Chemical mapping of a 177-nucleotide RNA with 2A3. It was measured as part of the RMDB library OK1LIB.
[RMDB]
RNA sequence: GGGAACGACUCGAGUAGAGUCGAAAACUCGAUCUCCUCGGCAGCCUUCGCAAUCUCCGGUUCGAUGCCACAGCUCGCGAAAAGGAGGUCCACCACAACAUUCGCGGCAGUGUCUGCGGUUGCUCCGCCAACCCGUGCACUUCGGUGCACGGGUUGGAAAAGAAACAACAACAACAAC
Reactivity to 2A3 in 0.01 (KOAc 150mM, MgCl2 10mM, bicine 150mM(pH8.5), 24C), signal-to-noise 2, nucleotides 027 to 126: c010u000c010g000a080u010c000u000c000c000u010c010g100g000c060a020g030c020c010u070u170c050g000c040a060a110u040c000u010c040c000g060g000u060u060c000g050a040u040g020c000c040a160c000a080g000c010u110c070g000c050g010a020a050a030a020g110g000a050g030g020u000c030c000a080c000c030a100c030a070a030c000a130u080u080c030g020c010g100g000c020a070g070u010g010u150c050u040g010c040g040g020u060u080g000c020u000c020c020g030
About this RNA:
For 2A3, 813 sequencing reads were counted. Reactivities are given for positions 27 through 126. 2A3 adducts were read by reverse transcription with SuperScript II with manganese. The reactions ran in a buffer of 150 mM KOAc, 10 mM MgCl2 and 150 mM bicine (pH 8.5), at 24 C.